[RMDB]
RNA sequence: GGGAACGACUCGAGUAGAGUCGAAAAUGACUGGAAUGUCGCCUGUGUGCAAAGGCUGGGCCUCGUGAGCAUGGUUGUUUACUUUGGCACACAGCUAAGUGGGGUUCAAAAAUCAAAACUGAAUGACCCCUUAGUGGGGUUUCGACCCCACUAAGGGAAAAGAAACAACAACAACAAC
Reactivity to DMS in 0.01 (KOAc 150mM, MgCl2 10mM, bicine 150mM(pH8.5), 24C), signal-to-noise 2, nucleotides 027 to 126: u000g010a010c030u000g000g030a130a110u000g000u010c040g010c210c000u000g010u000g040u030g010c020a050a070a060g000g030c110u000g020g000g020c020c010u000c130g030u000g010a150g060c290a060u000g010g010u000u020g030u000u000u000a110c020u000u000u000g000g010c000a010c020a050c010a030g000c060u010a040a130g000u000g010g000g020g000u000u000c040a010a110a100a110a100u010c130a050a070a110a110c110u000g000a060a130u000g010a130c100